This 170-nucleotide RNA was probed chemically with 2A3 and DMS. The RNA was probed in 150 mM KOAc, 10 mM MgCl2 and 150 mM bicine (pH 8.5) at 24 C. The 2A3 profile rests on 19,624 reads. For 2A3 the reverse transcriptase was SuperScript II with manganese. DMS adducts were read by reverse transcription with MarathonRT.
RNA sequence: GGGAACGACUCGAGUAGAGUCGAAAAGUUCAGGUUACCUGCGGUAGCAUGACUCUUAAUGGUCUUUGGCUUGACAACACAGUCUGGUGCCCACGACACGUAAUGUGCCCGGCUGACCAGUUGUCUGAAACUCAGCAGUUCGCUGCUGAGAAAAGAAACAACAACAACAAC
Reactivity to 2A3 in 0.01 (KOAc 150mM, MgCl2 10mM, bicine 150mM(pH8.5), 24C), signal-to-noise 9, nucleotides 027 to 129: g030u050u070c030a020g020g040u020u050a030c010c020u130g120c100g070g010u030a010g010c040a050u060g000a050c020u020c020u150u160a150a080u250g040g000u020c000u100u080u090g070g020c030u050u120g010a000c010a000a000c010a000c000a000g010u000c020u110g010g020u100g030c030c040c020a050c020g220a060c030a010c130g080u100a120a080u170g000u020g010c000c010c000g000g000c000u000g020a050c000c020a040g000u000u000g010u000c030u040g050a040a040a000
Reactivity to DMS in 0.01 (KOAc 150mM, MgCl2 10mM, bicine 150mM(pH8.5), 24C), signal-to-noise 8, nucleotides 027 to 129: g020u030u020c070a000g040g000u010u010a000c040c020u030g010c120g060g050u020a030g030c030a030u000g000a040c060u040c060u020u020a130a100u080g000g030u000c030u020u040u030g070g000c060u010u000g020a030c000a010a010c050a050c050a040g020u030c020u000g060g000u010g040c030c140c060a030c130g030a150c130a100c210g030u040a070a090u070g020u030g030c000c000c010g010g030c010u030g000a000c020c010a010g000u030u000g010u040c020u000g040a070a090a090